[RMDB]
RNA sequence: GGGAACGACUCGAGUAGAGUCGAAAAAUCGCGGCUGGGGCUUAGGACCCCACUCCUGCGAGACAGGAGUAAUCCUAAACAGGGUUUUCACCCUUCCUUUAGUUUCCUUCCUCUCCUGGAGAGGUCUUCUGCCCUAGCCCGGUCUUCGAAGCUUCCUGUUGUCUAAUAGCUUCGGCUAUUAGACAACAAAAGAAACAACAACAACAAC
Reactivity to 2A3 in 0.01 (KOAc 150mM, MgCl2 10mM, bicine 150mM(pH8.5), 24C), signal-to-noise 1, nucleotides 027 to 156: a000u020c010g020c070g000g010c000u000g010g000g000g000c000u000u010a010g010g020a000c020c020c020c020a060c000u000c020c000u040g020c170g040a000g000a020c300a080g010g000a000g000u030a000a020u060c020c010u020a040a030a090c300a120g080g010g000u100u150u300u300c160a050c000c000c000u010u000c020c000u030u000u010a010g010u020u020u030c000c010u010u080c000c000u000c000u000c000c000u000g010g000a020g000a000g000g000u000c000u010u000c020u030g000c000c000c000u000a000g000c010c000c000g000g020u000c030u070u100c040g080a110a030g020c070u040u000c000c010u000